[RMDB]
Structure probing data (DMS and 2A3) for a 177-nucleotide construct. Reactivities are rounded to 0.1 and cut off at 0 and 3. For 2A3 the reverse transcriptase was SuperScript II with manganese. For DMS the reverse transcriptase was MarathonRT. Conditions: 150 mM KOAc, 10 mM MgCl2 and 150 mM bicine (pH 8.5), 24 C. The data come from the RNA Mapping Database (RMDB), library OK1LIB.

RNA sequence: GGGAACGACUCGAGUAGAGUCGAAAAUUGCUGUCGGAAUAUUACUUGGUUACUUUGUUGCACAACGUGCACUAGUUAAAGCAGGAUUACAUAAAGAUACUUUAGUAGAUAUUAUUUUUUAUAGUGCGCAAUCAUAGUAGUUCGCUACUAUGAUUGCAAAAGAAACAACAACAACAAC
Reactivity to DMS in 0.01 (KOAc 150mM, MgCl2 10mM, bicine 150mM(pH8.5), 24C), signal-to-noise 2, nucleotides 027 to 126: u010u000g000c010u000g010u020c020g000g020a080a050u010a030u000u020a050c010u000u000g000g000u030u000a070c070u000u030u010g000u030u010g020c070a060c100a110a060c140g010u000g000c050a080c020u000a000g000u000u010a020a070a080g090c010a030g030g030a050u000u020a090c140a130u000a060a000a040g000a220u000a010c010u010u030u010a050g000u060a030g000a090u010a010u030u000a020u000u000u000u070u000u000a030u040a090g000u000g000c190
Reactivity to 2A3 in 0.01 (KOAc 150mM, MgCl2 10mM, bicine 150mM(pH8.5), 24C), signal-to-noise 7, nucleotides 027 to 126: u080u070g030c020u030g020u080c040g050g130a110a060u120a070u140u030a070c020u060u090g040g020u170u040a060c040u120u140u070g060u120u060g030c010a020c010a140a140c200g030u010g000c030a020c060u010a010g050u030u140a080a030a020g080c030a010g080g060a080u060u140a070c050a060u140a110a090a030g060a070u120a120c020u140u170u090a040g010u030a030g060a100u050a060u160u050a130u050u100u020u010u020u080a150u080a100g020u040g030c040